[RMDB]
RNA sequence: GGGAACGACUCGAGUAGAGUCGAAAAGCGUAAUAACCUGCGCUGAGCCCUUCUCCCCCAGCUUGCCUGUGUCCUAGGGAAUUGGAAGGUCAUCCUUCACAGGAUCGUGUGGAAGUCCUGCUCGGGGUCCAAACAUGGUAAUUCGUUACCAUGUUAAUUUCCGGAUAUAGUUCGCUAUAUCCGGAAAAAAAGAAACAACAACAACAAC
Reactivity to DMS in 0.01 (KOAc 150mM, MgCl2 10mM, bicine 150mM(pH8.5), 24C), signal-to-noise 3, nucleotides 027 to 156: g010c020g000u000a070a200u000a130a100c120c070u010g000c000g020c010u000g000a120g000c030c010c010u010u000c050u000c020c000c000c030c020a080g000c050u000u010g010c040c020u000g030u000g020u000c040c040u010a150g000g020g020a110a160u010u010g020g020a140a070g020g010u000c080a140u000c020c000u000u000c080a080c090a060g000g020a070u000c060g040u000g030u000g010g000a130a150g000u000c010c010u000g010c030u000c060g020g010g030g080u020c050c030a180a040a020c000a010u000g010g020u000a010a060u010u010c300g020u020u000a010c000c000a020u010g010u000u000a040a160
Reactivity to 2A3 in 0.01 (KOAc 150mM, MgCl2 10mM, bicine 150mM(pH8.5), 24C), signal-to-noise 1, nucleotides 027 to 156: g020c010g010u010a040a110u090a210a210c000c020u020g030c010g010c000u010g020a090g050c040c000c050u110u030c150u020c010c010c000c000c010a010g010c000u020u040g000c000c010u030g000u030g010u150c030c040u050a070g040g000g140a090a100u130u170g060g030a020a030g060g010u130c080a090u120c010c010u060u040c030a020c000a110g010g010a080u060c060g030u080g040u110g130g100a030a030g030u040c000c000u050g030c050u080c070g020g000g020g020u050c010c000a000a050a000c000a000u010g000g000u000a020a020u000u030c080g000u040u000a000c000c000a000u010g000u000u010a010a010